[RMDB]
RNA sequence: GGGAACGACUCGAGUAGAGUCGAAAAACGAUGAGCGAUACGUCGCUCAUCGAAUCUGUGACAAUUACUAAAAACUUCCCCAAAUAAAAAGGACAUGAAAAGACGGACUACUUACGAGUAGUCCGAAAUAGUUUAAUGUAUUCGUACAUUAAACUAUAAAAGAAACAACAACAACAAC
Reactivity to 2A3 in 0.01 (KOAc 150mM, MgCl2 10mM, bicine 150mM(pH8.5), 24C), signal-to-noise 9, nucleotides 027 to 126: a000c010g000a000u010g000a010g010c000g000a000u010a050c240g080u020c000g000c000u000c000a000u000c000g000a000a020u010c020u040g120u060g080a040c050a100a130u170u160a100c090u210a060a060a080a090a050c020u040u030c010c010c000c020a050a130a080u240a080a120a040a010a020g090g010a040c070a080u180g140a090a060a010a030g080a020c000g000g000a000c000u000a000c000u030u030a020c120g010a000g000u000a000g000u000c000c000g000a000a010
Reactivity to DMS in 0.01 (KOAc 150mM, MgCl2 10mM, bicine 150mM(pH8.5), 24C), signal-to-noise 7, nucleotides 027 to 126: a070c010g020a000u000g000a000g000c010g020a040u010a070c180g040u000c000g010c010u000c000a000u000c000g000a020a030u020c040u000g000u010g020a110c120a090a070u030u020a070c110u010a060a060a050a120a080c160u000u000c020c000c010c150a070a080a080u040a030a040a090a060a060g000g010a060c090a080u010g010a070a060a050a100g010a200c020g000g000a020c000u000a010c000u000u000a110c160g010a040g020u000a000g010u000c010c000g000a000a030